RNA sequence: GGGAACGACUCGAGUAGAGUCGAAAAGGGGUCCUUCGCGAAGAACUUCUGUUGUCAGUCUGUACUGAAGCCUCCACGGUACAAGACUUGGAUUUACAGAAGGGAGCGAAGGACGGAGGCACCCAAAGACAUUCGCCUGUUCGCAGGCGAAUGUCAAGUAUUCUAGCUGGUUCGCCAGCUAGAAUACAAAAGAAACAACAACAACAAC
Reactivity to 2A3 in 0.01 (KOAc 150mM, MgCl2 10mM, bicine 150mM(pH8.5), 24C), signal-to-noise 1, nucleotides 027 to 156: g020g010g100g030u000c000c030u010u000c000g030c000g150a260a070g030a030a040c000u010u000c010u000g020u060u030g070u040c060a080g010u040c000u000g010u000a010c000u010g070a200a070g010c000c000u000c020c000a010c000g000g000u040a060c080a200a210g000a010c000u020u150g210g050a060u200u160u080a000c000a010g000a000a010g000g010g010a010g000c010g010a000a000g000g000a000c000g010g000a000g000g000c010a040c000c010c000a060a080a010g000a000c000a000u010u010c000g030c000c030u020g020u080u090c260g010c170a000g010g000c020g000a000a000u000g000u000c000a000a000
An RNA of 207 nucleotides, treated with 2A3 and read out base by base. Conditions: 150 mM KOAc, 10 mM MgCl2 and 150 mM bicine (pH 8.5), 24 C. Values are in units of 0.01, from 0 to 300, in steps of 10.